An RNA of 207 nucleotides, treated with 2A3 and read out base by base. Reactivities are given for positions 27 through 156. 2A3 adducts were read by reverse transcription with SuperScript II with manganese.
RNA sequence: GGGAACGACUCGAGUAGAGUCGAAAAACGAGUCCGUACGCGGACUCGAAGGGCCCCAGAAGACCAAGGGGCCCAAACCUACCACUCAUUAUAUGCAUGGAAAUCACUAGGUGAUACGUCACCUAGAACACGCUUUUAAGCUUCGGCUUAAAAGCAAGUCUGGUCUUAUGUUCGCAUAAGACCAGACAAAAGAAACAACAACAACAAC
Reactivity to 2A3 in 0.01 (KOAc 150mM, MgCl2 10mM, bicine 150mM(pH8.5), 24C), signal-to-noise 1, nucleotides 027 to 156: a000c000g020a000g000u060c010c000g020u040a040c180g000c030g110g010a000c040u010c000g000a010a000g010g000g010c000c000c000c080a130g150a290a060g040a070c080c060a160a140g000g000g000g000c000c000c010a000a000a000c000c000u020a000c020c020a050c060u040c040a000u100u160a150u140a050u200g110c080a040u080g080g140a030a080a050u170c060a040c050u000a030g000g000u000g000a000u000a110c230g060u000c000a000c000c000u000a000g000a010a030c050a000c070g000c010u010u010u000u000a000a000g000c000u040u090c160g010g000c000u000u000a000a000a000a000g000c000a000a000